[RMDB]
The record gives the reactivity of an RNA of 177 nucleotides to DMS and 2A3. It was measured as part of the RMDB library M2PK50. Reactivities are given for positions 27 through 126. For DMS the reverse transcriptase was MarathonRT. High DMS reactivity at an A or C suggests that its Watson-Crick edge is free.

RNA sequence: GGGAACGACUCGAGUAGAGUCGAAAACUUACGUGGUUCGCCACGUAAGAAAGUGGAAGAGGAGCGAUGAACCCACACAAAACAAGACAACGAAAAAUAAAAAAACACGCUGCUUCGGCAGCGUGAACAUGUCUAUCAACUUCGGUUGAUAGACAUGAAAAGAAACAACAACAACAAC
Reactivity to DMS in 0.01 (KOAc 150mM, MgCl2 10mM, bicine 150mM(pH8.5), 24C), signal-to-noise 2, nucleotides 027 to 126: c000u000u000a000c000g060u000g020g000u000u010c230g020c000c000a000c000g020u000a000a000g000a030a090a080g010u010g000g000a060a090g000a070g000g030a040g050c130g010a070u000g030a060a090c030c020c020a090c080a070c110a050a030a030a110c120a040a100g010a030c030a020a040c050g040a030a030a060a060a140u050a050a030a080a090a030a040a150c010a010c000g000c000u000g010c000u000u010c200g000g000c010a000g000c010g000u010g000a020a060
Reactivity to 2A3 in 0.01 (KOAc 150mM, MgCl2 10mM, bicine 150mM(pH8.5), 24C), signal-to-noise 2, nucleotides 027 to 126: c000u010u010a000c010g000u010g000g060u040u060c050g040c080c000a000c010g000u000a000a000g010a010a020a000g080u070g030g060a070a080g040a070g110g020a030g050c080g060a060u070g050a110a080c020c000c010a010c000a000c010a020a100a050a030c030a020a040g120a050c030a090a020c090g180a080a060a040a050a000u260a060a140a040a020a000a000a010c000a000c000g000c000u010g010c000u020u020c110g070g000c000a020g010c000g000u000g000a010a000